The record gives the reactivity of an RNA of 177 nucleotides to DMS and 2A3.
[RMDB]
RNA sequence: GGGAACGACUCGAGUAGAGUCGAAAAAUCGCACCCUUCUCUGGCUCGAUGCCAUCGGCAUGGCCGCCUACACGGUCAUGGGCGCCGCCAAGGGGCUUGCGCUGGGCUUCGGCCCGUCAGUCGCUAACAUAGUGAUGGCUUUCGAGCCAUCACUAUGAAAAGAAACAACAACAACAAC
Reactivity to DMS in 0.01 (KOAc 150mM, MgCl2 10mM, bicine 150mM(pH8.5), 24C), signal-to-noise 3, nucleotides 027 to 126: a110u000c100g020c090a180c030c020c010u010u010c040u010c090u010g020g000c010u010c080g000a080u010g010c030c020a060u000c160g010g010c010a040u000g000g000c010c010g000c050c040u010a150c190a160c000g000g000u000c020a030u020g000g000g020c060g010c050c090g010c050c080a060a070g010g000g020g010c080u000u000g010c020g010c030u020g000g010g020c010u000u010c180g030g010c020c000c000g010u000c060a010g020u000c000g040c000u000a060a210
Reactivity to 2A3 in 0.01 (KOAc 150mM, MgCl2 10mM, bicine 150mM(pH8.5), 24C), signal-to-noise 2, nucleotides 027 to 126: a000u130c050g050c050a200c000c000c000u030u020c030u030c020u030g050g010c020u020c140g120a060u110g010c020c020a100u140c060g100g020c030a030u030g010g020c000c000g000c020c020u110a060c100a000c080g020g010u020c010a000u020g010g050g000c090g130c060c030g020c020c000a050a050g050g000g020g000c030u040u100g030c030g020c020u040g000g000g000c000u030u050c200g080g000c000c000c010g000u000c010a000g040u020c000g020c050u020a070a040

For DMS, 3,626 sequencing reads were counted. Source: RMDB library OK2TST, as collected in RNAgym. The reactions ran in a buffer of 150 mM KOAc, 10 mM MgCl2 and 150 mM bicine (pH 8.5), at 24 C.